RNA sequence: GGGAACGACUCGAGUAGAGUCGAAAAGAUAUGGAUUGUUAAACAGUGAUGACCUGGUCUGUCGGAAACGACAGCCAGCAAGCUGUCUAACAAUCCUAAGUCAAAAGGGUUUACUUCGGUAAACCCAGGUUUAGGUACACUUCGGUGUACCUAAACCAAAAGAAACAACAACAACAAC
Reactivity to 2A3 in 0.01 (KOAc 150mM, MgCl2 10mM, bicine 150mM(pH8.5), 24C), signal-to-noise 2, nucleotides 027 to 126: g040a040u070a060u160g010g010a000u010u020g000u000u040a020a040a010c030a010g020u010g200a300u190g090a130c020c040u010g010g300u300c050u000g030u000c000g030g060a070a050a050c020g000a000c000a000g010c000c000a000g010c010a050a050g000c050u010g000u000c020u000a000a000c000a000a000u000c000c000u020a050a000g030u000c010a010a050a050a170g060g010g030u030u040u000a030c040u020u120c300g080g000u010a020a020a020c000c000c000a010
Reactivity to DMS in 0.01 (KOAc 150mM, MgCl2 10mM, bicine 150mM(pH8.5), 24C), signal-to-noise 1, nucleotides 027 to 126: g000a070u000a300u000g000g000a050u000u010g000u010u000a000a020a000c000a010g000u000g000a140u010g000a070c300c000u000g000g020u010c000u000g000u000c020g030g000a130a110a170c010g020a000c030a000g000c000c010a000g000c010a020a190g030c050u000g010u000c020u000a000a010c000a010a000u000c000c000u000a000a130g020u010c010a060a000a140a080g010g000g000u000u000u000a020c000u000u060c280g000g030u000a000a000a020c000c020c000a050